[RMDB]
RNA sequence: GGGAACGACUCGAGUAGAGUCGAAAAACAAUGGGUGAUGAUGAGCAGCAGCAGCAGCAGCAUCCAUUACAUGGUAUACCAAUUGCAGGUGUUUUAGGUGACCAACAAGCUGCAAUGGUUGGUCAAACUACCUGCUGAGGUUCGCCUCAGCAGGUAGAAAAGAAACAACAACAACAAC
Reactivity to DMS in 0.01 (KOAc 150mM, MgCl2 10mM, bicine 150mM(pH8.5), 24C), signal-to-noise 2, nucleotides 027 to 126: a080c130a040a010u010g010g000g010u000g000a060u000g010a090u020g010a240g000c060a130g000c020a050g010c070a200g000c040a050g000c020a030g010c010a010u010c020c010a030u000u020a040c150a100u000g010g010u000a090u000a090c020c060a050a120u000u030g010c070a080g000g020u000g010u000u000u000u020a050g000g010u010g020a010c040c010a000a010c000a060a110g010c060u000g000c020a160a110u000g000g010u000u000g000g000u010c000a040a040a090

Overview
Source: RMDB library OK2TRN, as collected in RNAgym. The record gives the reactivity of an RNA of 177 nucleotides to DMS. For DMS the reverse transcriptase was MarathonRT. The reactions ran in a buffer of 150 mM KOAc, 10 mM MgCl2 and 150 mM bicine (pH 8.5), at 24 C.